[RMDB]
RNA sequence: GGGAACGACUCGAGUAGAGUCGAAAACCUCGUAAAAACGUCACCUAAAGAUAACUGGCAAACAAAACUACGCUUUAGCUGCCUAAUUGCUGCAGCUAGCUCCUCCCGCCAUCGCCCGCGUGGCGUUCGAGGGGCUCAUAUGAAGCGGGCUACGCCCCACGUGCACAUACUUCGGUAUGUGCACGUGAAAAGAAACAACAACAACAAC
Reactivity to 2A3 in 0.01 (KOAc 150mM, MgCl2 10mM, bicine 150mM(pH8.5), 24C), signal-to-noise 3, nucleotides 027 to 156: c000c000u020c020g040u070a000a000a070a070a080c030g030u020c030a080c060c040u130a090a140a100g090a140u140a120a170c090u130g060g000c040a080a100a030c020a060a110a130a060c050u110a030c060g020c140u050u110u110a010g000c010u010g000c000c000u170a300a300u160u200g110c160u080g000c010a000g000c000u000a010g000c000u000c000c000u000c000c010c000g000c000c000a010u010c070g000c000c000c000g010c000g030u010g010g000c020g000u050u030c020g010a000g000g030g010g000c000u020c030a090u300a090u290g160a090a030g010c000g000g000g000c000u010a010c000g000c000c000c000